[RMDB]
RNA sequence: GGGAACGACUCGAGUAGAGUCGAAAACGCUGUCGCUUCGGAUAUUACCCGGUGGAAACAACUGAAGCUCCCGAGAACCGCUUUUUCUCUAUCUUCUUUGCUUCGGGGCGAGGGUGUUUAGCCCUUGGAACCGCAGUUGGUUCCUCGGAACUAAACUGAAACAUUAACACUUCGGUGUUAAUGUUUCAAAAGAAACAACAACAACAAC
Reactivity to 2A3 in 0.01 (KOAc 150mM, MgCl2 10mM, bicine 150mM(pH8.5), 24C), signal-to-noise 2, nucleotides 027 to 156: c030g020c030u070g060u150c020g050c050u060u120c020g070g000a120u140a220u220u190a280c060c040c000g150g060u100g030g070a060a070a030c000a090a000c030u040g010a060a000g000c020u070c050c040c000g030a030g010a050a040c110c030g080c220u030u180u010u070u030c030u010c020u070a200u140c030u270u020c030u190u210u160g030c000u000u020c000g020g000g000g000c020g020a060g000g060g000u030g030u030u140u090a020g040c000c000c010u010u010g010g010a030a000c000c060g000c040a120g020u090u080g080g000u020u020c010c010u000c030g000g020a020a090c040u120a100a050a000c010u030